[RMDB]
Chemical mapping of a 177-nucleotide RNA with 2A3 and DMS. Values cover nucleotides 27 to 126. For 2A3, 1,741 sequencing reads were counted. The data come from the RNA Mapping Database (RMDB), library OK2TST. For DMS the reverse transcriptase was MarathonRT.
RNA sequence: GGGAACGACUCGAGUAGAGUCGAAAAUGAUGAAGCAGUUUUUCACUGACAACUUCAAGAAUAACAACCGUUAGGGCCACACUCAAUUACUACCGACCUAUUUGCAUGCUUUGAGCUAAUCGGCAACCAUCCCGUUCACAUUCGUGUGAACGGGAUGAAAAGAAACAACAACAACAAC
Reactivity to 2A3 in 0.01 (KOAc 150mM, MgCl2 10mM, bicine 150mM(pH8.5), 24C), signal-to-noise 2, nucleotides 027 to 126: u070g040a010u100g020a010a030g000c010a000g000u000u000u000u120u240c090a030c020u090g050a070c040a090a050c020u040u040c030a050a040g080a040a120u190a080a050c080a030a060c050c010g060u070u050a050g010g030g000c000c000a030c000a030c020u000c050a030a140u120u060a060c040u030a060c020c050g080a100c000c000u050a120u060u110u060g020c000a010u040g030c070u050u130u120g040a060g000c040u040a070a090u030c010g070g020c010a010a020c000
Reactivity to DMS in 0.01 (KOAc 150mM, MgCl2 10mM, bicine 150mM(pH8.5), 24C), signal-to-noise 2, nucleotides 027 to 126: u010g000a180u000g000a020a070g010c040a020g000u010u000u010u020u000c170a090c050u000g000a150c070a040a100c010u000u000c030a040a080g000a220a130u000a080a120c080a090a080c060c030g030u000u000a110g030g020g010c030c020a080c070a000c040u000c020a040a070u000u020a030c100u000a080c060c030g000a050c070c020u000a080u020u000u000g010c060a100u000g010c040u010u000u020g010a080g010c020u000a030a100u000c030g000g000c030a140a080c130